[RMDB]
RNA sequence: GGGAACGACUCGAGUAGAGUCGAAAAUUACAGAUCUUAAAUGCACAUCUGUGGUUCUCCUCUCUGUGCUCCAACAGUUACACUUAGAGGCUAAUAGUAGGGCCUGGGCUUUCUGUGUUAAAUGCCAUCACACAACCGUUCGCGGUUGUGAAAAGAAACAACAACAACAAC
Reactivity to DMS in 0.01 (KOAc 150mM, MgCl2 10mM, bicine 150mM(pH8.5), 24C), signal-to-noise 6, nucleotides 027 to 129: u010u030a030c030a040g030a050u040c110u070u020a100a160a130u030g000c300a110c250a080u040c030u010g020u000g020g030u010u020c060u010c030c050u030c030u020c030u050g030u030g050c060u050c080c100a080a120c120a050g030u060u020a110c070a100c080u030u030a050g020a080g050g030c090u050a020a020u030a090g040u030a090g000g000g000c070c060u000g030g030g000c000u010u010u010c070u050g050u070g000u000u000a040a060a070u030g030c060c060a070u000c120a080
Reactivity to 2A3 in 0.01 (KOAc 150mM, MgCl2 10mM, bicine 150mM(pH8.5), 24C), signal-to-noise 6, nucleotides 027 to 129: u090u040a010c010a000g000a010u040c040u090u210a140a170a170u260g100c110a030c000a100u000c010u010g040u040g040g000u030u000c020u020c010c000u030c020u000c010u020g040u040g060c020u040c070c040a070a050c010a070g040u080u080a050c060a020c020u020u070a030g020a000g060g020c010u060a090a070u040a210g110u020a050g090g000g000c000c000u020g020g020g000c000u020u100u010c040u050g020u010g050u060u080a040a090a030u130g040c020c010a060u080c010a030